[RMDB]
RNA sequence: GGGAACGACUCGAGUAGAGUCGAAAAUCUACGCCUUCUUUGGCCAAUUCGCGAAGGAUAGACACAGUUUGCUGGUCGUCCUUCGCCGCCCGAAGGCACGCGGCCGCGUAUUCCAGGCGAUGAUACCCUGGGAAUGAGAUUUCGAUCUCAUUCCCAGAAAAGAAACAACAACAACAAC
Reactivity to DMS in 0.01 (KOAc 150mM, MgCl2 10mM, bicine 150mM(pH8.5), 24C), signal-to-noise 3, nucleotides 027 to 126: u000c010u000a300c140g020c010c020u000u010c030u000u010u010g010g000c040c090a100a140u020u000c190g000c000g000a010a000g010g020a020u000a080g000a010c010a200c010a030g010u000u010u010g000c030u000g000g000u000c000g010u000c000c000u000u000c010g030c000c150g000c050c010c190g010a070a070g000g050c190a040c130g000c130g010g020c060c090g000c110g000u020a080u000u000c110c110a100g000g000c030g010a160u010g000a080u020a160c060c030
Reactivity to 2A3 in 0.01 (KOAc 150mM, MgCl2 10mM, bicine 150mM(pH8.5), 24C), signal-to-noise 3, nucleotides 027 to 126: u010c010u050a060c050g000c010c020u140u000c050u130u140u160g000g000c020c000a100a280u230u170c120g000c000g000a000a000g020g010a000u060a180g030a170c300a020c030a300g040u190u290u300g270c050u010g010g000u000c000g000u000c000c000u000u000c000g000c020c000g000c010c000c030g140a060a060g020g000c010a000c030g090c010g040g010c070c040g020c000g010u000a160u070u070c050c050a020g020g000c020g020a030u050g010a000u070a100c000c000